[RMDB]
An RNA of 177 nucleotides, treated with 2A3 and DMS and read out base by base.
The RNA was probed in 150 mM KOAc, 10 mM MgCl2 and 150 mM bicine (pH 8.5) at 24 C.
Values cover nucleotides 27 to 126.
For DMS, 2,861 sequencing reads were counted.
DMS adducts were read by reverse transcription with MarathonRT.
RNA sequence: GGGAACGACUCGAGUAGAGUCGAAAAGAUAUGGAUCUACUCGGGAGCGUACUACUCGGAAACGAGUAGACGCGACGAUCGAGGGAUCCUAAGUCAAAACACUUACAUGGUUCGCCAUGUAAGUGAACAUUCUGAUCUCCUUCGGGAGAUCAGAAUGAAAAGAAACAACAACAACAAC
Reactivity to 2A3 in 0.01 (KOAc 150mM, MgCl2 10mM, bicine 150mM(pH8.5), 24C), signal-to-noise 3, nucleotides 027 to 126: g000a000u010a010u070g010g000a000u030c010u240a300c010u300c000g020g030g020a030g020c000g010u070a300c000u010a010c010u010c000g050g000a030a020a020c010g010a000g020u000a000g020a000c000g020c000g170a300c040g000a010u010c020g010a010g030g000g000a000u000c010c000u000a020a000g050u010c030a000a020a130a160c010a000c010u010u000a000c000a010u000g010g050u050u090c300g060c120c010a000u000g000u010a010a000g000u000g000a020a000
Reactivity to DMS in 0.01 (KOAc 150mM, MgCl2 10mM, bicine 150mM(pH8.5), 24C), signal-to-noise 2, nucleotides 027 to 126: g020a020u000a050u010g000g000a020u000c000u000a180c000u000c000g010g000g000a030g040c000g000u020a090c000u010a010c000u000c010g010g010a040a030a020c000g010a010g020u000a000g000a020c000g030c000g000a080c290g000a020u020c000g000a040g000g000g010a010u000c000c000u000a000a100g000u000c010a130a100a110a210c010a010c000u000u000a000c000a000u000g010g010u010u000c300g010c010c000a000u000g010u000a000a000g010u000g000a080a130